This 177-nucleotide RNA was probed chemically with DMS and 2A3. For DMS, 3,803 sequencing reads were counted. The reactions ran in a buffer of 150 mM KOAc, 10 mM MgCl2 and 150 mM bicine (pH 8.5), at 24 C. As a SHAPE reagent, 2A3 marks flexible, mostly unpaired nucleotides at the ribose 2'-OH.
[RMDB]
RNA sequence: GGGAACGACUCGAGUAGAGUCGAAAAGAUAUGGACCCUUCGUGUGGACGUUGAAAUAGGUUCGGAAACGAACCUAUGGAGUCCAUACACGAGAGGGUCCUAAGUCAAACCCUUCCUUCGGGAAGGGCAACUUUUGCAAGUUCGCUUGCAAAAGUUGAAAAGAAACAACAACAACAAC
Reactivity to DMS in 0.01 (KOAc 150mM, MgCl2 10mM, bicine 150mM(pH8.5), 24C), signal-to-noise 3, nucleotides 027 to 126: g010a050u010a300u000g010g000a010c000c000c010u000u000c080g020u000g020u000g000g010a020c000g020u000u000g000a100a110a010u010a000g010g020u000u000c000g020g000a070a090a170c010g000a010a020c010c010u000a000u000g000g000a100g010u000c000c020a070u010a060c020a300c050g010a070g000a040g010g000g010u000c000c000u000a010a060g010u000c030a120a080a300c000c000c000u000u000c000c000u000u020c200g030g000g000a010a000g000g000g010
Reactivity to 2A3 in 0.01 (KOAc 150mM, MgCl2 10mM, bicine 150mM(pH8.5), 24C), signal-to-noise 2, nucleotides 027 to 126: g010a030u050a040u110g010g000a010c000c000c000u010u090c040g010u000g000u020g000g020a020c030g160u300u070g020a010a030a010u010a000g000g010u020u010c010g020g010a070a050a020c010g000a000a000c010c010u000a000u010g010g000a000g000u000c000c010a010u050a020c010a020c050g300a300g050a060g120g020g000u000c000c000u000a000a010g000u000c000a040a080a240c000c020c000u000u010c000c010u010u100c300g180g000g010a000a000g000g000g000
Source information:
Values cover nucleotides 27 to 126. In probing experiments dimethyl sulfate is read out at A N1 and C N3, which are open when not base-paired.